[RMDB]
RNA sequence: GGGAACGACUCGAGUAGAGUCGAAAAAGACGUACCUACUACAUUGGCUUGGGUGAACAAUCAGAUAAUUUUCUUUGUUUCUCGAGUCUUUGCUAAUACAGGCAGUGUUUGCUACACUCCUAUAGAUUGAGGAGAUGGUUCGCCAUCUCCAAAAGAAACAACAACAACAAC
Reactivity to 2A3 in 0.01 (KOAc 150mM, MgCl2 10mM, bicine 150mM(pH8.5), 24C), signal-to-noise 3, nucleotides 027 to 129: a000g110a030c090g030u060a040c000c010u010a040c030u010a010c020a030u000u040g000g000c010u010u010g000g010g000u120g010a010a000c010a010a020u260c070a020g040a040u090a110a300u170u150u110u020c010u020u020u010g010u010u010u000c000u000c010g000a000g000u010c000u000u010u010g020c020u060a070a070u100a110c050a020g030g060c030a010g010u010g050u050u170u140g050c030u050a010c000a020c020u010c000c010u040a050u050a050g180a090u030u150g070a030
Reactivity to DMS in 0.01 (KOAc 150mM, MgCl2 10mM, bicine 150mM(pH8.5), 24C), signal-to-noise 6, nucleotides 027 to 129: a050g030a080c080g000u000a100c030c000u050a120c160u060a130c050a050u010u000g000g000c090u000u000g020g040g020u060g010a040a050c000a030a050u090c110a000g040a040u000a110a080u020u010u000u000c040u040u020u020g040u000u000u000c020u010c000g020a000g030u020c050u030u010u020g030c100u000a000a000u050a080c180a070g000g000c100a000g000u000g040u020u040u030g020c140u020a070c030a000c030u060c010c020u050a000u040a030g020a120u020u020g000a300